The data come from the RNA Mapping Database (RMDB), library OK3TST. An RNA of 207 nucleotides, treated with 2A3 and DMS and read out base by base. High DMS reactivity at an A or C suggests that its Watson-Crick edge is free. For DMS the reverse transcriptase was MarathonRT.
[RMDB]
RNA sequence: GGGAACGACUCGAGUAGAGUCGAAAACAGGCACACCCUAGAUGAGGGAUGUUCUAUUGAAAAGGAUGUUCUGUUACACAGGAUUCUUUUACCUGUGUAAAUUGGUAAAAGACAAAGAAAGAUGGUAGAGAUAGAUAUUCCAAAUUAAAGAAGGCAAGGUUUUAGGCAUAUUCGUAUGCCUAAAACCAAAAGAAACAACAACAACAAC
Reactivity to 2A3 in 0.01 (KOAc 150mM, MgCl2 10mM, bicine 150mM(pH8.5), 24C), signal-to-noise 3, nucleotides 027 to 156: c050a010g070g000c020a020c000a020c030c000c030u070a070g030a180u080g040a050g000g020g000a020u020g030u030u030c000u010a080u050u090g060a090a050a040a050g100g020a030u040g060u100u040c030u030g040u030u030a000c010a000c000a020g050g000a050u070u110c080u060u160u090u110a080c000c000u030g010u000g000u010a000a020a020u080u070g000g010u040a080a050a000a010g020a020c010a050a090a010g080a060a040a030g040a010u040g050g030u060a030g000a000g000a080u050a060g040a020u020a070u130u020c000c000a050a050a020u110u070a050a100a050g070a030a000g070g000c040a020a080
Reactivity to DMS in 0.01 (KOAc 150mM, MgCl2 10mM, bicine 150mM(pH8.5), 24C), signal-to-noise 2, nucleotides 027 to 156: c060a120g000g090c070a080c010a100c040c020c020u010a110g030a100u000g010a250g010g060g000a050u000g000u000u020c030u000a140u000u010g000a090a090a120a110g000g010a000u000g030u010u000c030u000g020u000u020a020c030a060c030a070g000g010a130u000u000c160u000u000u000u020a070c010c000u000g000u020g010u000a010a020a090u010u010g010g010u010a040a040a060a050g020a090c070a050a080a130g000a070a140a110g010a060u000g040g030u000a040g010a230g000a070u010a040g010a070u000a090u000u000c030c030a080a110a070u010u000a070a050a080g010a040a060g000g000c080a090a170